An RNA of 177 nucleotides, treated with DMS and 2A3 and read out base by base.
It was measured as part of the RMDB libraries RFM100 and RFMREP.

RNA sequence: GGGAACGACUCGAGUAGAGUCGAAAACUUGAGUGCAAACUCAUGGUAGGACCUGAGAGGAGCCGAUGUUCCGUCGUACGUUUUGAAAAACGAGCCAGGGAGUGUGCCUGUUUGACGAGUCUAACCGCCUAGAACUAUUGUUCGCAAUAGUUCUAGGAAAAGAAACAACAACAACAAC
Reactivity to DMS in 0.01 (KOAc 150mM, MgCl2 10mM, bicine 150mM(pH8.5), 24C), signal-to-noise 9, nucleotides 027 to 126: c030u000u010g010a030g010u010g010c240a070a100a050c010u000c010a030u010g010g010u010a090g010g010a130c020c020u000g000a130g010a100g010g000a080g010c040c130g000a080u010g010u000u000c030c010g010u000c090g010u010a090c060g000u000u000u020u020g010a060a070a050a050a040c040g010a180g000c080c030a070g000g000g000a070g020u010g010u010g000c020c020u000g010u000u010u010g010a120c030g000a040g000u000c020u000a070a150c020c020g010
Reactivity to 2A3 in 0.01 (KOAc 150mM, MgCl2 10mM, bicine 150mM(pH8.5), 24C), signal-to-noise 9, nucleotides 027 to 126: c010u030u040g020a010g010u080g050c060a060a060a080c010u010c020a030u050g030g020u070a090g010g080a050c010c020u070g040a070g010a030g140g030a020g020c030c030g090a070u120g060u090u050c030c030g030u030c020g020u060a070c030g010u010u030u070u170g180a120a080a000a010a010c010g000a020g030c030c010a050g030g040g000a050g040u100g010u040g040c000c020u040g060u060u060u070g050a040c010g000a000g000u000c000u020a040a040c010c000g000